[RMDB]
RNA sequence: GGGAACGACUCGAGUAGAGUCGAAAAACGAGCUAGUACGCUAGCUCGAGCCUGGUCCAGUGGUUCUUGACAGUUCAACAGUUCUGUAGCACAAUUGUGAAAUGUUUAGGACCACUAGACCCGGCAAAUACAUAUGGAGAUUCGUCUCCAUAUGUAUAAAAGAAACAACAACAACAAC
Reactivity to 2A3 in 0.01 (KOAc 150mM, MgCl2 10mM, bicine 150mM(pH8.5), 24C), signal-to-noise 9, nucleotides 027 to 126: a010c010g000a000g000c000u010a000g020u050a040c240g030c120u000a000g010c000u000c000g000a010g000c000c000u000g000g000u000c000c010a000g000u000g000g000u000u000c000u010u010g010a000c000a020g010u010u010c050a160a080c000a060g010u040u030c100u220g230u260a090g070c100a050c030a140a040u030u020g000u000g000a010a010a010u000g000u000u010u010a000g000g000a000c000c000a000c000u000a000g000a000c000c000c000g000g000c000a010a050
Reactivity to DMS in 0.01 (KOAc 150mM, MgCl2 10mM, bicine 150mM(pH8.5), 24C), signal-to-noise 8, nucleotides 027 to 126: a140c010g000a010g010c010u000a000g000u010a110c240g030c010u000a000g000c000u000c000g000a060g010c000c000u000g000g000u000c000c040a010g020u000g000g010u000u000c000u000u000g000a010c000a010g010u000u000c010a090a060c010a020g020u000u000c130u020g020u020a150g020c140a180c250a010a010u000u000g010u000g000a010a030a020u000g000u000u000u000a010g000g000a000c000c000a000c000u000a020g000a010c000c000c050g000g010c000a040a080